[RMDB]
RNA sequence: GGGAACGACUCGAGUAGAGUCGAAAAAGAUCCUAUACGUAGGAUCAUGAACAUCCUGGUGACCAAACACAGUUGAUUCGGGAUGUUUGGUCGUCGAGACGUUCAAAAGCGAUGGUACGCCAUCGCAUCCUGUGUUCCCUUUCGAGGGAACACAGGAAAAAGAAACAACAACAACAAC
Reactivity to 2A3 in 0.01 (KOAc 150mM, MgCl2 10mM, bicine 150mM(pH8.5), 24C), signal-to-noise 6, nucleotides 027 to 126: a000g010a000u010c000c000u020a020u030a060c260g060u020a000g000g000a000u010c000a020u090g000a000a000c010a040u030c000c010u020g010g000u010g000a000c000c000a000a000a000c010a010c030a080g060u110u090g210a220u300u210c090g180g120g080a120u020g000u000u000u000g000g010u000c000g000u010c010g000a010g000a020c030g020u020u020c030a040a040a060a010g010c000g000a000u000g000g030u030a030c200g030c030c000a000u000c000g000c000a010
Reactivity to DMS in 0.01 (KOAc 150mM, MgCl2 10mM, bicine 150mM(pH8.5), 24C), signal-to-noise 3, nucleotides 027 to 126: a050g000a020u000c000c000u000a010u030a050c180g040u010a020g010g010a020u000c000a120u000g010a030a000c000a180u010c000c020u010g010g000u000g000a010c000c000a020a000a000c000a010c050a130g010u000u050g010a220u040u030c020g010g030g010a060u000g020u000u000u000g000g000u000c000g030u000c010g000a030g010a040c080g020u000u000c000a030a080a120a200g000c030g010a000u000g000g030u010a170c300g000c030c000a000u000c000g000c000a010